[RMDB]
RNA sequence: GGGAACGACUCGAGUAGAGUCGAAAAGCACGGAGACAUGCACGGAAACGUAGACGGAGGCACCAUGACGAACGUGGCUGUCCGAGGCCUUCGUAUUUGACUGGUAAUUCAGUCGUUAGGACAGCUAGAUUAUGGCAGUCUUCGGACUGCCAUAAUCAAAAGAAACAACAACAACAAC
Reactivity to DMS in 0.01 (KOAc 150mM, MgCl2 10mM, bicine 150mM(pH8.5), 24C), signal-to-noise 3, nucleotides 027 to 126: g020c070a030c050g010g020a120g000a060c040a080u000g030c070a070c030g010g010a060a080a140c110g020u010a080g000a050c010g000g000a040g040g020c020a100c160c090a080u020g010a080c120g000a040a100c110g020u010g010g010c030u000g000u000c010c000g000a150g040g000c020c030u000u000c030g010u000a030u000u010u000g000a030c000u000g010g010u000a100a180u000u000c010a010g000u000c010g000u000u000a090g010g010a040c000a010g010c000u000a050
Reactivity to 2A3 in 0.01 (KOAc 150mM, MgCl2 10mM, bicine 150mM(pH8.5), 24C), signal-to-noise 2, nucleotides 027 to 126: g080c040a000c100g070g020a060g030a030c080a020u080g050c030a000c070g090g020a090a060a000c070g040u060a060g040a050c010g030g010a000g000g000c000a050c010c060a080u170g070a100c100g030a210a030c050g040u120g080g000c010u020g000u020c020c000g020a050g120g000c020c000u010u010c010g010u030a220u070u060u120g010a000c000u000g000g030u050a060a050u100u050c000a000g020u010c020g030u070u070a020g000g000a010c020a010g020c000u010a010